[RMDB]
This 177-nucleotide RNA was probed chemically with DMS and 2A3. For DMS, 20,359 sequencing reads were counted. Values cover nucleotides 27 to 126. DMS adducts were read by reverse transcription with MarathonRT.
RNA sequence: GGGAACGACUCGAGUAGAGUCGAAAACUCGUUCGACGCCGAGCACAUCCACCGCCUCGCGAUGGCGGCACCGGUGUCGCGGAUCAUGGUGCGCCAGCCGCAAUCGAAGGCGAACGCGGGCGCGUUCGGCAUUCAAUAUCUUCGGAUAUUGAAUGCCAAAAGAAACAACAACAACAAC
Reactivity to DMS in 0.01 (KOAc 150mM, MgCl2 10mM, bicine 150mM(pH8.5), 24C), signal-to-noise 9, nucleotides 027 to 126: c020u000c020g020u000u000c020g020a090c020g010c020c010g000a140g040c040a090c130a120u010c090c090a150c140c010g010c010c030u010c160g010c040g010a040u000g010g010c130g000g010c020a030c180c080g010g020u000g010u010c020g010c040g020g010a120u010c190a110u010g010g010u000g010c040g010c010c010a090g010c010c010g010c020a060a030u000c070g000a160a060g000g010c010g010a060a070c190g010c030g000g000g010c040g010c020g020u000u000c060
Reactivity to 2A3 in 0.01 (KOAc 150mM, MgCl2 10mM, bicine 150mM(pH8.5), 24C), signal-to-noise 9, nucleotides 027 to 126: c010u000c010g020u050u040c050g100a210c020g040c020c000g060a070g040c050a050c010a200u090c070c030a060c070c010g010c000c010u070c100g120c020g070a040u020g020g000c000g010g000c010a030c040c160g020g010u050g080u160c030g000c010g050g030a060u210c060a160u300g110g000u040g010c010g000c000c010a020g010c010c010g000c000a010a040u050c040g040a040a010g030g000c010g010a060a020c070g010c000g030g010g010c020g000c000g010u050u050c030

The reactions ran in a buffer of 150 mM KOAc, 10 mM MgCl2 and 150 mM bicine (pH 8.5), at 24 C. The 2A3 profile rests on 41,214 reads.